Source: RMDB library OK3TST, as collected in RNAgym.
Chemical mapping of a 207-nucleotide RNA with 2A3.
Conditions: 150 mM KOAc, 10 mM MgCl2 and 150 mM bicine (pH 8.5), 24 C.
[RMDB]
RNA sequence: GGGAACGACUCGAGUAGAGUCGAAAAGGUAAGAGGCAACUACGUAAAUGUACUUCUAAAUGAGUGUUUAUAAUAACCAGCAACAGUUUUUGUUAUUUUAACAAGAAGAAAUGUGCAGUUUUCCAUGUCAGGAGACAAGGAAGAAGCACAAAUUAGACCAGUACUACUGCUUCGGCAGUAGUACUGGAAAAGAAACAACAACAACAAC
Reactivity to 2A3 in 0.01 (KOAc 150mM, MgCl2 10mM, bicine 150mM(pH8.5), 24C), signal-to-noise 1, nucleotides 027 to 156: g040g000u080a070a040g010a010g030g010c020a120a030c070u170a080c050g100u030a140a130a100u140g030u000a060c010u050u040c070u080a040a080a040u160g030a060g040u100g000u050u070u060a130u050a180a000u080a060a070c100c050a020g040c080a070a000c020a080g120u110u010u000u040u060g010u000u030a080u050u110u000u040a080a000c080a060a000g090a080a000g040a020a250a090u060g040u000g000c040a070g000u000u000u060u080c010c000a000u040g050u040c000a000g000g190a150g150a100c030a050a050g000g010a000a030g000a010a000g000c020a000c000a000a040a000u000u040a000g020a030